[RMDB]
RNA sequence: GGGAACGACUCGAGUAGAGUCGAAAAUCUGACAUCGCCGAGCGCAUCAACUCCGAGUUUGAAGACGAGCUCACCUGCAUCUUCAACGACGACAAUGCCCCCAAGCUCAUCCUGCGGAUCCGCGUGCCAUUCACAACAGAUUCGUCUGUUGUGAAUGAAAAGAAACAACAACAACAAC
Reactivity to 2A3 in 0.01 (KOAc 150mM, MgCl2 10mM, bicine 150mM(pH8.5), 24C), signal-to-noise 3, nucleotides 027 to 126: u050c000u040g040a020c020a090u060c040g000c030c020g040a010g000c020g000c030a040u040c030a060a070c020u030c040c040g010a040g040u050u080u130g070a050a020g050a030c100g060a020g040c030u030c050a110c020c050u050g010c010a030u010c020u030u030c010a050a040c040g110a010c000g030a040c060a080a140u180g040c010c000c010c000c000a040a000g000c010u000c020a040u030c000c010u030g000c020g020g010a050u010c010c010g060c000g010u020g020c000
Reactivity to DMS in 0.01 (KOAc 150mM, MgCl2 10mM, bicine 150mM(pH8.5), 24C), signal-to-noise 7, nucleotides 027 to 126: u000c040u010g010a110c060a060u000c060g010c030c050g010a090g000c060g020c050a050u000c060a070a110c130u000c020c050g010a200g000u000u010u000g010a070a060g020a050c080g000a110g000c030u000c110a090c120c060u020g000c030a100u000c010u010u000c020a040a050c080g000a240c240g010a040c120a050a100u000g000c020c000c000c020c030a070a100g010c050u000c040a090u000c020c030u000g020c050g010g000a070u010c050c050g020c080g020u010g020c100
Chemical mapping of a 177-nucleotide RNA with 2A3 and DMS. For DMS, 7,847 sequencing reads were counted. It was measured as part of the RMDB library OK2TRN. Conditions: 150 mM KOAc, 10 mM MgCl2 and 150 mM bicine (pH 8.5), 24 C. DMS adducts were read by reverse transcription with MarathonRT. For 2A3, 5,978 sequencing reads were counted.